[RMDB]
RNA sequence: GGGAACGACUCGAGUAGAGUCGAAAACAGAGAUAGGGAGGCUCCAAGAUACUUAAUAUUGCAAGGGAAUAUGGUUGCCAAUUGUAUGUCUAUUACCUGUAGAUGUGAGGAGCCAGAGUCCGAAAUAGCGCUAAAUUAGUUUCGACUAAUUUAGCGCAAAAGAAACAACAACAACAAC
Reactivity to DMS in 0.01 (KOAc 150mM, MgCl2 10mM, bicine 150mM(pH8.5), 24C), signal-to-noise 1, nucleotides 027 to 126: c060a170g000a160g000a080u010a120g000g020g000a160g000g010c020u000c000c000a040a120g050a210u000a070c080u020u000a020a110u020a030u010u000g010c050a050a030g020g000g020a060a080u020a050u010g020g020u000u010g000c070c140a070a220u010u020g000u000a080u000g000u000c020u000a020u010u010a160c180c110u000g030u000a030g000a050u000g000u000g020a260g010g000a020g000c020c000a060g000a160g000u020c000c040g020a070a000a070u000a120
Reactivity to 2A3 in 0.01 (KOAc 150mM, MgCl2 10mM, bicine 150mM(pH8.5), 24C), signal-to-noise 1, nucleotides 027 to 126: c070a040g090a020g090a140u200a040g000g030g050a000g000g000c030u040c000c000a030a030g020a070u140a070c030u160u090a300a020u210a020u240u060g040c070a090a090g020g030g030a000a050u090a080u210g070g030u000u130g120c080c000a100a040u170u100g080u080a080u090g010u020c000u000a010u060u050a130c040c070u050g050u110a000g000a140u020g010u030g090a040g000g000a000g000c000c000a000g120a000g090u000c000c000g010a030a000a030u230a000
The record gives the reactivity of an RNA of 177 nucleotides to DMS and 2A3. The data come from the RNA Mapping Database (RMDB), library OK2TST. The 2A3 profile rests on 473 reads. The RNA was probed in 150 mM KOAc, 10 mM MgCl2 and 150 mM bicine (pH 8.5) at 24 C. 2A3 is a SHAPE reagent: it acylates the 2'-hydroxyl of flexible nucleotides of all four kinds.